[RMDB]
An RNA of 177 nucleotides, treated with 2A3 and read out base by base.
The 2A3 profile rests on 739 reads.
Source: RMDB library RFM100, as collected in RNAgym.
For 2A3 the reverse transcriptase was SuperScript II with manganese.
RNA sequence: GGGAACGACUCGAGUAGAGUCGAAAAAGCGCCGCCAUACGUGGCGGCGCAACGUCAGCUAGCUUAUCAGACUGGUGUUGGCUGUUGUAUUGCCAUGGCAACACUAGUUUGUAAGCUGGCUGAAGAAGGGUAAAACAGCAUUCGUGCUGUUUUACCCAAAAGAAACAACAACAACAAC
Reactivity to 2A3 in 0.01 (KOAc 150mM, MgCl2 10mM, bicine 150mM(pH8.5), 24C), signal-to-noise 1, nucleotides 027 to 126: a000g000c070g000c010c000g140c000c020a100u090a160c180g200u060g000g000c000g020g050c000g000c000a000a000c020g140u050c000a000g000c010u030a000g000c000u040u020a050u300c010a010g000a000c000u010g080g000u000g080u060u060g160g050c070u100g060u230u110g010u090a300u020u210g120c010c010a010u060g000g030c000a000a000c000a000c000u000a000g000u000u000u000g000u010a010a000g000c000u000g000g000c000u000g000a000a000g040a030a020